[RMDB]
Conditions: 150 mM KOAc, 10 mM MgCl2 and 150 mM bicine (pH 8.5), 24 C. The record gives the reactivity of an RNA of 177 nucleotides to 2A3 and DMS. The DMS profile rests on 5,025 reads. Reactivities are given for positions 27 through 126. It was measured as part of the RMDB library OK2TST. As a SHAPE reagent, 2A3 marks flexible, mostly unpaired nucleotides at the ribose 2'-OH. For DMS the reverse transcriptase was MarathonRT.
RNA sequence: GGGAACGACUCGAGUAGAGUCGAAAAUCAUGCUCUCCUUCUGGGUGACCAUCGCCUUCUACGCGCUCGCCGUACUCGUGACCCAGGGACUCCUCUCGCACGAGGAACUCACCUCCACCUACACCCCCAUGUAUCGCAGAUUCGUCUGCGAUACAUGAAAAGAAACAACAACAACAAC
Reactivity to 2A3 in 0.01 (KOAc 150mM, MgCl2 10mM, bicine 150mM(pH8.5), 24C), signal-to-noise 2, nucleotides 027 to 126: u080c020a020u090g010c020u030c020u010c050c000u120u100c040u130g050g020g030u070g060a050c020c020a100u080c050g050c010c030u060u000c020u080a040c030g040c020g020c050u030c050g030c020c040g000u020a060c010u020c040g050u030g090a110c010c020c030a030g000g000g040a040c010u010c000c010u000c010u010c070g090c030a050c110g010a030g040g010a030a010c020u040c020a080c010c010u050c030c000a040c000c010u050a020c040a090c030c000c000c010
Reactivity to DMS in 0.01 (KOAc 150mM, MgCl2 10mM, bicine 150mM(pH8.5), 24C), signal-to-noise 5, nucleotides 027 to 126: u010c090a060u000g000c050u000c020u000c030c020u000u010c080u000g010g010g010u010g000a110c080c080a090u010c080g000c040c040u000u010c060u010a090c100g020c070g030c100u010c050g020c040c040g010u010a060c080u010c030g020u000g020a100c050c020c020a080g010g000g010a110c100u000c040c010u010c020u000c120g030c110a060c120g000a040g000g000a060a080c070u000c030a160c030c010u000c030c030a070c050c030u010a080c130a220c020c010c000c040